Conditions: 150 mM KOAc, 10 mM MgCl2 and 150 mM bicine (pH 8.5), 24 C.
Structure probing data (2A3 and DMS) for a 207-nucleotide construct.
[RMDB]
RNA sequence: GGGAACGACUCGAGUAGAGUCGAAAAUCAGAAUCAGGCCGGAGUGUUUAGCGCUCCGUAAACACGGUCGUACAUCCAGCCGGUAGCCUGGUUCCUUGCAUUGAGUGAUGUAUGGAGUUUAUAGAGCAAAAGAAAGACCUGUUCGCAGGUCUUUCAACUAUACCCGAUAGUUCGCUAUCGGGUAUAGAAAAGAAACAACAACAACAAC
Reactivity to 2A3 in 0.01 (KOAc 150mM, MgCl2 10mM, bicine 150mM(pH8.5), 24C), signal-to-noise 2, nucleotides 027 to 156: u070c000a020g010a010a000u020c000a000g000g000c010c010g050g000a000g020u080g050u090u090u190a160g080c010g010c000u000c000c000g020u040a020a010a010c110a010c050g000g040u070c030g030u080a040c010a090u010c010c000a030g010c000c000g040g010u010a010g000c000c000u030g000g000u000u010c020c000u040u120g010c020a020u020u120g080a050g060u150g030a030u040g030u090a100u100g020g000a050g010u000u180u010a180u100a040g120a010g030c040a000a030a100a120g010a000a000a000g000a000c000c000u010g000u020u120c280g020c150a000g000g000u000c000u000u000u000c000a000a000
Reactivity to DMS in 0.01 (KOAc 150mM, MgCl2 10mM, bicine 150mM(pH8.5), 24C), signal-to-noise 1, nucleotides 027 to 156: u010c040a060g000a030a000u010c030a050g000g010c020c000g000g010a070g030u010g010u010u020u000a220g050c020g030c000u000c000c000g050u000a050a080a130c070a060c040g000g020u000c060g000u000a110c070a070u010c040c020a100g040c010c020g030g040u000a060g000c030c000u000g020g010u000u000c000c020u010u000g020c070a110u020u010g020a190g030u020g010a070u000g000u030a060u000g000g020a270g010u000u000u000a160u020a180g020a130g010c050a030a090a110a190g000a020a010a030g030a000c000c010u000g000u000u010c220g000c030a030g010g020u000c000u020u000u000c010a050a150
For DMS, 2,492 sequencing reads were counted.
The 2A3 profile rests on 957 reads.